[RMDB]
An RNA of 177 nucleotides, treated with 2A3 and DMS and read out base by base. 2A3 adducts were read by reverse transcription with SuperScript II with manganese. Values cover nucleotides 27 to 126. The data come from the RNA Mapping Database (RMDB), library OK2TST. In probing experiments dimethyl sulfate is read out at A N1 and C N3, which are open when not base-paired.
RNA sequence: GGGAACGACUCGAGUAGAGUCGAAAACCUGUCAUGACUAGUGCCUGAGGCUUCUUCCCAAAGAAAUGGACUCAGCUAGUAUCGAGAAGGAGCAGGAAGAUUGAAGAGAAUCACAGAAGGCAGGAGGCUAUCCGUAGUGGUUCGCCACUACGGAUAGAAAAGAAACAACAACAACAAC
Reactivity to 2A3 in 0.01 (KOAc 150mM, MgCl2 10mM, bicine 150mM(pH8.5), 24C), signal-to-noise 4, nucleotides 027 to 126: c000c010u020g090u100c090a170u150g060a040c020u030a020g030u020g160c010c030u040g030a030g020g060c010u020u020c000u030u030c010c070c000a050a120a020g060a020a110a030u180g020g030a050c010u010c060a030g030c030u030a020g030u030a100u080c110g020a060g030a080a020g050g010a030g000c040a040g060g040a060a040g040a030u050u120g020a110a040g090a050g060a130a040u040c010a030c020a080g060a090a010g060g040c020a000g010g060a020g050g000
Reactivity to DMS in 0.01 (KOAc 150mM, MgCl2 10mM, bicine 150mM(pH8.5), 24C), signal-to-noise 4, nucleotides 027 to 126: c000c010u000g020u010c100a080u000g010a060c030u000a060g010u010g020c110c050u000g010a100g010g000c040u000u000c030u010u000c040c070c090a050a090a100g010a050a070a190u000g010g010a100c020u000c050a080g000c030u000a030g010u000a070u000c070g010a090g020a090a050g010g010a060g030c040a050g020g020a080a050g000a070u000u000g010a080a080g000a090g000a050a050u010c020a070c100a090g000a110a070g000g010c040a040g000g020a090g000g000
The reactions ran in a buffer of 150 mM KOAc, 10 mM MgCl2 and 150 mM bicine (pH 8.5), at 24 C.